Conditions: 150 mM KOAc, 10 mM MgCl2 and 150 mM bicine (pH 8.5), 24 C. This 177-nucleotide RNA was probed chemically with 2A3 and DMS. For 2A3, 8,194 sequencing reads were counted. The data come from the RNA Mapping Database (RMDB), library TTRDES.
RNA sequence: GGGAACGACUCGAGUAGAGUCGAAAAGAUAUGGAAUCCAUACAGCUUUUGACGGCUUCGCAUCGGAAACGAUGUGGAAGCCGAUAAGCUGAUGGAUUCCUAAGUCAAAUCCCGACUUCGGUCGGGACACUUUUAGUCUGUUCGCAGACUAAAAGUGAAAAGAAACAACAACAACAAC
Reactivity to 2A3 in 0.01 (KOAc 150mM, MgCl2 10mM, bicine 150mM(pH8.5), 24C), signal-to-noise 4, nucleotides 027 to 126: g020a010u100a050u180g000g000a000a000u010c000c030a030u210a300c010a130g020c020u110u150u260u300g300a180c050g000g000c000u000u010c010g000c000a010u010c010g010g020a060a080a040c040g010a000u000g010u040g220g040a000a010g020c000c000g000a000u000a000a000g000c000u000g000a000u000g000g000a000u000u010c000c000u000a000a000g000u000c020a040a000a220u030c010c000c000g000a010c000u090u090c300g100g000u010c020g000g000g010a020
Reactivity to DMS in 0.01 (KOAc 150mM, MgCl2 10mM, bicine 150mM(pH8.5), 24C), signal-to-noise 4, nucleotides 027 to 126: g000a040u010a300u000g000g000a020a000u000c000c000a010u000a210c000a000g000c000u000u000u010u000g020a260c120g000g000c000u010u000c000g010c000a010u000c000g020g000a160a130a280c000g020a010u000g020u000g050g030a000a010g020c000c000g000a010u000a020a000g010c000u010g000a030u000g000g000a000u000u000c010c010u000a020a080g000u000c030a130a140a200u000c000c000c000g010a010c000u010u020c210g030g010u010c000g000g000g000a010